[RMDB]
RNA sequence: GGGAACGACUCGAGUAGAGUCGAAAACUUAUCAGAAUUGCCCUGGCCCCAUAGUCAGAUAAUAAUUGAUACUAUCCGGGUACUCUUAAACUUUAAGGUCGUCCGUAGGCUUGUAAGGCGAGUGCGCGGAGUCGUUAUCGUUCGCGAUAACGACUCCAAAAGAAACAACAACAACAAC
Reactivity to DMS in 0.01 (KOAc 150mM, MgCl2 10mM, bicine 150mM(pH8.5), 24C), signal-to-noise 1, nucleotides 027 to 126: c130u050u000a090u060c130a300g060a060a020u040u090g050c140c010c000u000g000g020c020c000c020c030a060u000a070g000u000c030a010g000a160u000a060a090u000a100a230u110u040g000a080u050a060c020u000a060u020c070c050g020g000g000u000a010c050u020c010u060u050a060a050a090c050u040u010u000a060a170g000g000u000c090g000u000c120c100g000u020a150g000g000c030u000u070g000u020a000a000g000g000c000g000a020g000u020g030c000g020c090
Reactivity to 2A3 in 0.01 (KOAc 150mM, MgCl2 10mM, bicine 150mM(pH8.5), 24C), signal-to-noise 1, nucleotides 027 to 126: c020u060u070a020u130c120a050g210a300a060u140u210g020c000c020c000u060g100g000c000c000c020c000a010u020a040g050u030c020a040g040a070u100a090a060u150a180a080u100u140g020a000u090a180c000u030a030u000c060c000g170g000g000u040a000c000u000c000u060u270a130a180a160c020u090u040u120a000a000g090g000u040c000g010u030c080c040g060u020a060g030g000c000u000u000g020u020a030a060g010g000c040g040a030g030u060g010c100g010c040